[RMDB]
RNA sequence: GGGAACGACUCGAGUAGAGUCGAAAAUAUUUUAGAGGGAAGACCUCUUAUUGGAGCCACACUCCCAUGUAUGAUUGAGCAAUUCAAAGUGUUUUGGCUGAAACCCUACGAACAAUGUCCGCAGUGUUCAAAUGCAAAGCAACCAGGUGGGAAACCAUUCGUGUCAGUGGCAGUCAAGAAACAUAUUGUUAGUGCAUGGCCGAACGCAUCCCGAAUAAGCUGGACUAUCGGGGAUGGAAUCCCAUACAUUGGAUCAAGGACAGAAGACAUGACGGUUCGCCGUCAUGAAAAGAAACAACAACAACAAC
Reactivity to DMS in 0.01 (KOAc 150mM, MgCl2 10mM, bicine 150mM(pH8.5), 24C), signal-to-noise 1, nucleotides 027 to 266: u000a020u040u060u040u010a000g030a000g000g000g000a110a190g000a130c000c000u000c000u000u000a050u000u000g030g000a050g000c000c050a090c130a090c110u000c080c040c060a170u020g010u010a020u000g010a120u020u010g010a060g000c130a110a100u000u000c080a060a110a100g000u000g040u010u020u000u020g010g020c050u000g000a130a070a090c050c030c030u000a190c140g040a040a070c070a110a110u010g000u000c030c010g000c060a110g010u000g020u000u000c050a070a130a100u000g030c050a070a080a140g020c070a050a020c080c030a080g010g070u000g000g000g000a010a020a140c060c030a300u000u000c000g020u020g000u000c030a030g010u010g000g000c010a060g000u010c060a080a020g010a150a010a070c080a110u020a110u030u000g000u000u000a100g020u000g010c000a030u010g000g020c050c040g030a030a040c200g020c080a110u010c010c020c000g000a040a080u010a050a110g000c060u000g000g000a070c090u000a060u010c050g030g000g000g020a010u010g000g000a030a280u000c020c080c010a020u000a000c090a020u000u000g000g000a190u000c090a020a100g000g000a010c030a030g000a130a060g030a120